The record gives the reactivity of an RNA of 177 nucleotides to DMS and 2A3. For DMS, 5,936 sequencing reads were counted. The 2A3 profile rests on 2,635 reads. For 2A3 the reverse transcriptase was SuperScript II with manganese.
[RMDB]
RNA sequence: GGGAACGACUCGAGUAGAGUCGAAAAUGAGUGCUUCCAUUGCAGAAGCUUUAAAUCAAGUCGUUCAAAGGGGAAAUACUUCCUGGCUUGAUGUAGGCAUUUCUGGAACAUUGUUGAAGCAAUGUACGGAAUUGGACUUUUUCGAAAGUCCAAUUCCAAAAGAAACAACAACAACAAC
Reactivity to DMS in 0.01 (KOAc 150mM, MgCl2 10mM, bicine 150mM(pH8.5), 24C), signal-to-noise 3, nucleotides 027 to 126: u020g010a110g030u000g020c060u000u020c020c020a110u010u010g000c010a020g000a030a080g000c000u010u010u000a040a060a020u000c010a000a010g030u000c010g000u020u060c300a090a180a080g010g010g000g000a030a060a170u090a130c170u010u000c000c000u000g000g000c010u000u000g000a020u000g020u010a010g000g000c010a060u010u020u020c000u000g000g000a090a300c090a060u020u000g000u040u020g020a030a060g010c020a040a030u050g000u030a050c150
Reactivity to 2A3 in 0.01 (KOAc 150mM, MgCl2 10mM, bicine 150mM(pH8.5), 24C), signal-to-noise 5, nucleotides 027 to 126: u230g030a020g080u050g000c000u000u000c000c000a020u000u070g020c020a000g010a020a000g020c000u020u130u060a120a140a000u000c000a010a010g020u010c020g120u240u200c210a120a060a090g080g000g000g040a120a180a030u240a200c080u080u050c000c020u040g000g000c000u000u010g000a000u010g060u050a020g000g000c070a120u030u110u010c000u000g030g030a080a050c030a090u040u090g030u050u140g020a020a000g020c030a010a040u130g020u110a040c090
It was measured as part of the RMDB library OK1LIB. 2A3 is a SHAPE reagent: it acylates the 2'-hydroxyl of flexible nucleotides of all four kinds.